An RNA of 207 nucleotides, treated with 2A3 and read out base by base.
The data come from the RNA Mapping Database (RMDB), library OK3TST.
The RNA was probed in 150 mM KOAc, 10 mM MgCl2 and 150 mM bicine (pH 8.5) at 24 C.
Values cover nucleotides 27 to 156.
For 2A3 the reverse transcriptase was SuperScript II with manganese.
RNA sequence: GGGAACGACUCGAGUAGAGUCGAAAACUAGCAGAUAAUGUCUAUUAUAAAGUUGUGUGGGAUGUGAAGCGUGACGAUGUGCCAUAUGAGAAGCAAAAUAUGUCUUCCAUUGUGAGCAUUCGCUAUCUUGUUGAUAUUCCACACUUCUUAGCUGAUGUGCGUAUACUCUCUUCGGAGAGUAUACGCAAAAAGAAACAACAACAACAAC
Reactivity to 2A3 in 0.01 (KOAc 150mM, MgCl2 10mM, bicine 150mM(pH8.5), 24C), signal-to-noise 2, nucleotides 027 to 156: c010u040a000g000c020a000g050a160u060a100a130u120g060u030c090u120a110u170u170a160u130a110a010a000g000u030u010g000u000g000u000g000g000g000a000u020g040u060g090a030a000g000c020g030u000g080a070c020g060a090u130g030u040g050c010c030a040u000a000u000g210a240g000a100a000g020c040a030a030a150a200u280a200u090g060u060c000u000u000c000c000a000u000u190g000u020g010a080g010c000a010u000u050c010g000c000u030a090u080c030u060u080g020u070u040g030a010u000a000u080u000c010c010a000c000a000c000u000u000c000u020u050a020g000c010u040g040a130u100g010